[RMDB]
RNA sequence: GGGAACGACUCGAGUAGAGUCGAAAACAGGGGAGCGCGGCGGAUGUGGCGACUGCAGCCAUGCUCUCCAUCGCGCGCUGCCCAGAGCUCAAAGAGAUGGGCUGGACCAUGCUGCUCCAGGUGCACGCUCCACAGGAGAAUUCGUUCUCCUGUGGAGAAAAGAAACAACAACAACAAC
Reactivity to DMS in 0.01 (KOAc 150mM, MgCl2 10mM, bicine 150mM(pH8.5), 24C), signal-to-noise 3, nucleotides 027 to 126: c110a170g000g010g010g010a050g010c000g000c010g030g010c040g030g010a050u010g020u000g010g000c070g000a120c180u010g010c110a200g020c050c060a030u010g000c100u000c060u010c010c020a010u020c050g020c030g010c020g020c030u000g010c000c020c010a090g010a100g020c010u020c040a060a110a150g020a120g010a140u000g000g000g000c020u010g010g000a110c040c020a090u000g010c060u010g020c060u000c040c040a060g010g000u000g010c060a070c180g000
Reactivity to 2A3 in 0.01 (KOAc 150mM, MgCl2 10mM, bicine 150mM(pH8.5), 24C), signal-to-noise 3, nucleotides 027 to 126: c030a020g020g000g030g030a030g000c020g000c020g300g080c040g180g030a050u070g050u060g060g020c050g070a080c140u210g000c050a010g000c030c000a030u060g030c010u000c010u040c040c020a040u030c010g000c000g000c000g030c020u110g070c010c000c010a020g030a020g000c010u040c070a110a120a020g090a020g010a080u050g040g020g000c030u050g050g020a020c010c030a070u090g050c020u030g000c000u060c050c040a040g050g070u080g060c070a040c070g020